[RMDB]
RNA sequence: GGGAACGACUCGAGUAGAGUCGAAAAGGGAUUGUGAUUUUAAUAAACCACUCAUUGAGUGGCCACUUACUGAGUAUGAUUUUACUGAUUAUAAGGUACAACUCUUUGAGAAGUACUUUAAAUAUUGCUUAAUAUCGUACUUCGGUACGAUAUUAAGAAAAGAAACAACAACAACAAC
Reactivity to 2A3 in 0.01 (KOAc 150mM, MgCl2 10mM, bicine 150mM(pH8.5), 24C), signal-to-noise 4, nucleotides 027 to 126: g070g000g010a070u150u120g020u050g030a070u010u110u140u200a190a130u140a090a090a010c000c010a000c000u000c020a240u120u270g010a000g000u010g000g030c010c000a040c010u190u300a020c010u010g010a000g060u000a020u060g040a030u060u050u040u010a020c010u020g020a030u050u120a090u050a190a000g020g000u010a020c010a020a030c010u000c000u070u130u210g000a010g000a020a000g000u000a010c000u040u010u030a030a030a030u170a060u080u130g010
Reactivity to DMS in 0.01 (KOAc 150mM, MgCl2 10mM, bicine 150mM(pH8.5), 24C), signal-to-noise 5, nucleotides 027 to 126: g010g000g010a090u010u010g020u000g010a150u010u010u020u010a060a140u010a090a130a260c010c010a020c000u000c000a240u000u010g010a020g010u000g000g000c090c050a080c120u000u010a170c070u000g000a050g030u000a040u010g010a050u000u010u000u000a050c060u010g000a060u000u000a170u000a020a010g020g010u000a010c010a040a300c000u000c010u000u010u010g000a010g020a040a300g000u000a010c010u000u000u000a010a050a090u000a070u000u000g000
The record gives the reactivity of an RNA of 177 nucleotides to 2A3 and DMS. The RNA was probed in 150 mM KOAc, 10 mM MgCl2 and 150 mM bicine (pH 8.5) at 24 C. For DMS the reverse transcriptase was MarathonRT. For DMS, 3,666 sequencing reads were counted. 2A3 is a SHAPE reagent: it acylates the 2'-hydroxyl of flexible nucleotides of all four kinds.